[RMDB]
RNA sequence: GGGAACGACUCGAGUAGAGUCGAAAAAGAGCGUGGAUUCUUUGAAGAGGGAUCUGAGUUAACAUUAAAACAUUUCUUCUUUGCACAGGGCGGUGAGGCUGCUAUGACAGACUUCAAUUAUUACCGCUACAACAGAGUCACAGUACUUGAUAUUUGCGGUCUAUCAUGUGUUCGCACAUGAUAGACCAAAAGAAACAACAACAACAAC
Reactivity to 2A3 in 0.01 (KOAc 150mM, MgCl2 10mM, bicine 150mM(pH8.5), 24C), signal-to-noise 3, nucleotides 027 to 156: a000g070a030g030c030g030u060g030g010a060u040u020c010u060u140u160g020a060a040g020a040g000g050g020a030u030c060u120g020a040g040u060u060a070a050c060a130u110u180a060a090a040a030c020a040u120u080u000c010u070u000c000u100u060u060g060c060a090c040a140g140g040g000c000g000g010u070g000a020g020g000c000u010g060c020u100a220u270g030a110c000a090g060a120c020u030u000c070a050a080u060u070a050u040u100a190c000c000g010c010u100a020c010a090a000c030a020g010a010g040u050c050a030c010a160g080u200a050c050u050u110g060a040u070a150u210u110u090g040c040

This 207-nucleotide RNA was probed chemically with 2A3. For 2A3, 1,326 sequencing reads were counted. It was measured as part of the RMDB library OK3TST. Conditions: 150 mM KOAc, 10 mM MgCl2 and 150 mM bicine (pH 8.5), 24 C.